[RMDB]
This 177-nucleotide RNA was probed chemically with DMS and 2A3. For 2A3, 2,134 sequencing reads were counted. 2A3 adducts were read by reverse transcription with SuperScript II with manganese.
RNA sequence: GGGAACGACUCGAGUAGAGUCGAAAAGAUAUGGAUCACGCCAGACAUGCUAACUAUUCGGAAACGAAUAUUUAGCAACAGCUGGGUGAUCCUAAGUCAAAGAGACCGCUCUUCGGAGCGGUCUCAACAUCUAUGUAGCCUUCGGGCUACAUAGAUGAAAAGAAACAACAACAACAAC
Reactivity to DMS in 0.01 (KOAc 150mM, MgCl2 10mM, bicine 150mM(pH8.5), 24C), signal-to-noise 2, nucleotides 027 to 126: g000a000u000a040u000g000g000a020u000c010a000c000g020c000c000a010g000a030c030a300u020g020c000u000a000a030c070u010a000u000u000c000g040g010a010a010a040c000g000a000a000u000a000u000u000u000a010g030c020a070a060c250a130g020c000u000g000g000g020u000g010a010u000c000c000u000a000a070g000u000c010a120a150a190g010a020g010a030c000c000g020c000u000c000u000u020c260g020g000a000g000c000g000g000u000c000u000c010a040a130
Reactivity to 2A3 in 0.01 (KOAc 150mM, MgCl2 10mM, bicine 150mM(pH8.5), 24C), signal-to-noise 1, nucleotides 027 to 126: g000a000u020a000u040g020g020a020u010c050a050c220g260c210c000a010g010a060c070a270u300g000c010u000a000a000c010u000a000u010u000c000g000g040a000a000a040c010g010a010a000u000a000u000u000u000a000g040c060a160a030c040a010g000c000u010g000g080g000u000g000a000u000c000c010u000a040a010g000u020c010a010a250a190g000a000g030a030c010c000g000c000u010c010u060u260c300g060g000a000g000c000g010g020u000c000u000c000a000a000